[RMDB]
Annotation: The data come from the RNA Mapping Database (RMDB), library OK3TST. This 207-nucleotide RNA was probed chemically with DMS and 2A3. Reactivities are given for positions 27 through 156. For 2A3 the reverse transcriptase was SuperScript II with manganese. For DMS, 1,872 sequencing reads were counted. The reactions ran in a buffer of 150 mM KOAc, 10 mM MgCl2 and 150 mM bicine (pH 8.5), at 24 C.

RNA sequence: GGGAACGACUCGAGUAGAGUCGAAAACAUCGAGCUUACCCCACUCUGACGAGACAACUUCAUCCAGUUUGUCGAUUAUCCGUUGCUGGAUAUCAGAAUCUAACUGCGAGAACUGGUUUUCAGCUCGGGGCGAAAACUCCCAGUCCCACUCGUCGUCUAUUCUGAUUCGAUUCGUCGAAUCAGAAUAAAAAGAAACAACAACAACAAC
Reactivity to DMS in 0.01 (KOAc 150mM, MgCl2 10mM, bicine 150mM(pH8.5), 24C), signal-to-noise 1, nucleotides 027 to 156: c050a060u000c020g000a060g010c030u010u000a180c080c010c000c040a150c070u010c010u020g050a110c050g020a080g020a000c020a060a070c040u000u050c110a140u010c000c050a050g000u000u000u000g020u020c010g020a090u000u000a050u000c080c050g050u000u000g020c110u010g000g020a080u000a020u000c070a070g010a120a110u010c080u010a080a160c060u000g040c090g010a300g010a050a150c040u000g020g000u010u000u000u000c050a020g030c050u000c040g020g000g020g000c000g010a170a030a060a110c040u010c030c010c030a120g000u010c020c000c010a190c060u010c020g000u000c020g020u000c040
Reactivity to 2A3 in 0.01 (KOAc 150mM, MgCl2 10mM, bicine 150mM(pH8.5), 24C), signal-to-noise 4, nucleotides 027 to 156: c050a090u130c060g010a020g020c020u110u150a100c010c000c010c000a030c030u110c070u070g020a000c020g010a010g040a050c070a110a060c090u150u090c060a160u040c080c010a040g020u020u060u060g150u060c030g060a070u050u170a050u090c040c020g120u100u150g070c060u090g000g010a010u000a000u010c020a030g080a120a070u040c010u080a070a070c050u130g060c130g130a010g010a060a050c020u050g030g020u030u030u040u090c030a010g020c000u010c050g010g020g000g010c020g050a020a050a050a070c020u070c000c020c000a000g050u040c020c000c000a030c020u030c010g020u010c050g000u010c030